[RMDB]
RNA sequence: GGGAACGACUCGAGUAGAGUCGAAAAGAUAUGGAUGAUCACGCGAUAAGAUUGUACUCGGAAACGAGUACAACAAGAUCUUUUGACGCGUGCGUAUCCUAAGUCAAAAGGCGUGUUCGCACGCCAACCUAAGCAGUUCGUUCGCGAACUGCUUAGGAAAAGAAACAACAACAACAAC
Reactivity to DMS in 0.01 (KOAc 150mM, MgCl2 10mM, bicine 150mM(pH8.5), 24C), signal-to-noise 2, nucleotides 027 to 126: g010a010u000a070u020g000g010a030u000g010a090u010c020a030c010g000c010g020a190u000a080a050g000a120u010u000g000u000a000c030u000c000g010g000a030a030a060c010g000a020g020u000a000c010a000a050c210a190a060g000a130u010c040u000u000u000u010g000a130c040g000c000g010u000g010c190g000u000a050u000c000c010u010a030a110g000u000c010a050a110a130a090g010g010c010g040u000g000u000u000c200g040c000a010c010g030c000c000a040a030
Reactivity to 2A3 in 0.01 (KOAc 150mM, MgCl2 10mM, bicine 150mM(pH8.5), 24C), signal-to-noise 3, nucleotides 027 to 126: g000a000u010a020u050g000g010a000u020g020a020u070c000a000c010g030c010g150a170u070a300a090g040a050u020u070g000u000a000c000u010c000g000g000a000a000a020c010g000a010g000u010a000c000a010a010c010a000a040g110a150u090c000u100u280u110u290g210a050c020g000c000g000u010g000c000g000u030a000u000c000c000u010a040a000g010u000c030a050a000a010a220g000g000c020g010u020g030u100u160c280g040c090a010c010g000c030c000a010a010